[RMDB]
RNA sequence: GGGAACGACUCGAGUAGAGUCGAAAAGUGCUGUCGUUUCAUGAAAAAAAAUAAUCCACCCUUGAGUUAGCGGCUCAGGUGGAUUCGUCUAUCCUAUGGCCGAUCCCCUUGGAGGGAACCGUUUUAUGUACUGUCCUGUUUUCGAACAGGACAGUACAAAAGAAACAACAACAACAAC
Reactivity to 2A3 in 0.01 (KOAc 150mM, MgCl2 10mM, bicine 150mM(pH8.5), 24C), signal-to-noise 2, nucleotides 027 to 126: g100u130g060c060u000g010u030c010g010u010u000u040c100a160u130g220a010a000a000a000a000a000a000a060u190a000a030u020c010c000a000c060c030c050u050u080g000a000g010u060u080a050g110c190g080g000c010u000c010a000g020g020u020g000g010a000u000u000c020g020u020c010u030a100u040c020c020u050a090u090g040g000c000c000g080a110u040c000c010c000c000u040u260g060g010a070g010g000g000a000a050c030c020g000u000u050u000u020a080u050
An RNA of 177 nucleotides, treated with 2A3 and read out base by base.
For 2A3 the reverse transcriptase was SuperScript II with manganese.
The data come from the RNA Mapping Database (RMDB), library RFM100.
Conditions: 150 mM KOAc, 10 mM MgCl2 and 150 mM bicine (pH 8.5), 24 C.